[RMDB]
RNA sequence: GGGAACGACUCGAGUAGAGUCGAAAACUGUGUGUCCUCAUCGCCGCUGUCGCCAGCGGGUCGGCCGGGGCGGCUCUGAUCGUCGGCACAGCAACCACAUUCGGCGUUGCUCUGGCGGUGGCUGUCGGGUUUAUUUUACAUUCGUGUAAAAUAAACCAAAAGAAACAACAACAACAAC
Reactivity to DMS in 0.01 (KOAc 150mM, MgCl2 10mM, bicine 150mM(pH8.5), 24C), signal-to-noise 8, nucleotides 027 to 126: c090u010g010u000g020u010g000u000c020c020u010c080a070u010c090g020c020c140g020c020u000g010u000c090g010c090c020a060g020c090g000g010g010u000c060g010g000c020c030g020g010g010g010c060g010g000c020u010c070u000g000a050u000c070g010u000c060g010g010c130a080c110a060g010c050a070a050c010c020a100c110a180u000u010c140g000g010c110g020u010u000g000c020u000c040u000g010g010c010g000g020u000g010g010c020u000g010u010c090g020
Reactivity to 2A3 in 0.01 (KOAc 150mM, MgCl2 10mM, bicine 150mM(pH8.5), 24C), signal-to-noise 5, nucleotides 027 to 126: c040u050g020u030g010u020g050u200c000c030u070c030a120u070c040g030c040c010g000c010u030g030u110c020g020c070c000a010g020c020g030g030g060u070c050g050g010c020c020g030g030g070g030c000g030g000c030u020c090u160g080a130u050c060g040u010c000g060g000c060a010c000a080g010c010a010a020c010c010a060c030a210u170u180c080g080g000c060g050u060u020g000c010u010c010u030g000g010c000g030g010u000g000g000c020u030g080u120c050g040
The record gives the reactivity of an RNA of 177 nucleotides to DMS and 2A3. The DMS profile rests on 14,658 reads. The RNA was probed in 150 mM KOAc, 10 mM MgCl2 and 150 mM bicine (pH 8.5) at 24 C. High 2A3 reactivity points to a flexible backbone, as in loops and unpaired stretches. For DMS the reverse transcriptase was MarathonRT. It was measured as part of the RMDB library OK2TST.